[RMDB]
RNA sequence: GGGAACGACUCGAGUAGAGUCGAAAAUCACACUUAGCUACCUUUGCUGAGUUGGAAGCUGCGCAGAAAGCCUAUCAGGAAGCUAUGGACUCUGGUGACACCUCACCACAAGUUCUUAAGGCUUUGCCUUUCGAGAGAAGUUCGCUUCUCUCGAAAGAAAAGAAACAACAACAACAAC
Reactivity to 2A3 in 0.01 (KOAc 150mM, MgCl2 10mM, bicine 150mM(pH8.5), 24C), signal-to-noise 2, nucleotides 027 to 126: u040c010a020c000a000c050u030u020a020g000c020u060a130c050c070u130u160u160g000c010u010g000a010g020u070u020g010g020a040a000g010c050u070g030c040g000c050a040g150a060a060a030g010c000c030u090a100u130c030a040g050g110a030a020g000c050u030a050u080g020g010a010c000u020c030u060g000g000u000g020a020c030a090c090c050u000c010a000c000c010a000c010a030a030g020u050u010c000u020u070a120a090g050g010c000u040u020u080g010c000
Reactivity to DMS in 0.01 (KOAc 150mM, MgCl2 10mM, bicine 150mM(pH8.5), 24C), signal-to-noise 3, nucleotides 027 to 126: u000c070a070c110a060c030u000u010a020g040c010u010a100c210c120u020u020u000g000c030u000g000a020g010u000u000g020g000a080a060g000c040u010g000c110g010c090a060g000a070a080a040g000c010c020u010a070u000c200a100g010g000a030a030g010c060u000a120u010g000g000a000c010u000c300u000g010g000u000g000a050c190a080c260c220u000c000a020c020c000a030c240a070a040g000u000u000c010u020u000a090a080g010g010c000u000u010u000g000c110